[RMDB]
RNA sequence: GGGAACGACUCGAGUAGAGUCGAAAAGGUGUAAUGCUGUUUCACCAUCUCUACGAACCCAAUCAAGAAUUUCUUCGUCUGUUUGCACUUCUGGUCCUGGUGAAAUUUCUCCACCAUUGAAUGGAUCGAACUCCGUUAGAUUCGUCUAACGGAGUUCAAAAGAAACAACAACAACAAC
Reactivity to DMS in 0.01 (KOAc 150mM, MgCl2 10mM, bicine 150mM(pH8.5), 24C), signal-to-noise 2, nucleotides 027 to 126: g000g010u010g020u000a060a100u010g020c100u000g010u000u000u020c010a050c030c020a050u020c020u010c030u000a080c090g030a110a130c070c070c020a100a120u040c080a070a050g020a100a060u010u000u010c080u000u010c070g000u020c020u010g000u000u000u010g010c040a080c060u000u000c060u010g020g000u000c040c010u000g020g000u000g020a030a060a140u020u000u000c110u020c050c030a100c030c020a130u010u000g000a090a100u000g000g000a040u010c110
Reactivity to 2A3 in 0.01 (KOAc 150mM, MgCl2 10mM, bicine 150mM(pH8.5), 24C), signal-to-noise 1, nucleotides 027 to 126: g000g000u030g000u100a020a120u160g090c110u180g060u040u030u010c000a010c000c010a010u000c020u050c020u060a040c070g040a050a060c050c020c000a010a040u120c100a100a040g100a140a130u050u110u000c020u070u010c000g170u040c020u030g160u080u050u070g060c030a070c060u090u080c010u080g000g040u000c000c010u000g000g000u010g070a040a090a090u080u070u070c050u020c000c040a030c000c010a020u020u110g100a080a140u130g010g050a010u090c030

An RNA of 177 nucleotides, treated with DMS and 2A3 and read out base by base. Conditions: 150 mM KOAc, 10 mM MgCl2 and 150 mM bicine (pH 8.5), 24 C. The data come from the RNA Mapping Database (RMDB), library OK2TST. Reactivities are given for positions 27 through 126. For 2A3 the reverse transcriptase was SuperScript II with manganese. For DMS, 1,427 sequencing reads were counted.